[RMDB]
Annotation:
Conditions: 150 mM KOAc, 10 mM MgCl2 and 150 mM bicine (pH 8.5), 24 C. Chemical mapping of a 207-nucleotide RNA with DMS and 2A3. 2A3 adducts were read by reverse transcription with SuperScript II with manganese. The 2A3 profile rests on 1,708 reads. It was measured as part of the RMDB library OK3TST.

RNA sequence: GGGAACGACUCGAGUAGAGUCGAAAAAGCUGCUCUGAGCUGCUCAGCAUCUUUCUAGACUUUUCUUGUAGAUGAUUGUACACUGCCUCUCAGCUACUAUCCAAUCUUUUCCAUUGUGAUCAAACUCCAAAUCUUCCCUCCAACUCUUGGGAGAUGAAAGUGCAGAAAGUUUCGACUUUCUGCACUUAAAAGAAACAACAACAACAAC
Reactivity to DMS in 0.01 (KOAc 150mM, MgCl2 10mM, bicine 150mM(pH8.5), 24C), signal-to-noise 2, nucleotides 027 to 156: a090g000c040u000g020c020u000c050u000g010a080g000c060u000g030c000u000c040a160g020c060a050u000c040u010u000u000c020u000a300g010a060c080u000u000u000u000c020u010u010g010u000a070g020a100u010g000a090u000u000g020u000a070c050a110c060u000g020c080c010u000c030u000c020a080g010c050u000a060c010u000a150u000c050c020a060a090u000c030u000u000u010u000c040c020a220u010u000g020u000g010a060u000c060a060a060a110c040u000c030c020a030a070a050u000c010u010u010c010c010c020u000c050c030a040a130c050u010c070u000u020g020g020g000a070g010a040u000g010a060
Reactivity to 2A3 in 0.01 (KOAc 150mM, MgCl2 10mM, bicine 150mM(pH8.5), 24C), signal-to-noise 4, nucleotides 027 to 156: a000g000c020u020g010c010u020c100u150g060a040g020c100u080g030c030u070c050a030g020c000a030u000c020u060u250u020c030u070a050g020a180c070u100u180u150u040c020u020u090g040u080a030g010a060u060g050a090u070u150g010u040a040c050a020c100u030g030c010c000u020c010u000c010a010g000c010u020a020c030u040a050u000c020c010a010a070u020c030u020u110u080u010c040c020a090u060u100g070u080g040a060u100c040a090a080a110c050u020c070c020a070a160a150u050c080u080u080c020c000c030u060c040c050a100a100c040u050c060u110u110g030g010g000a040g000a000u070g020a050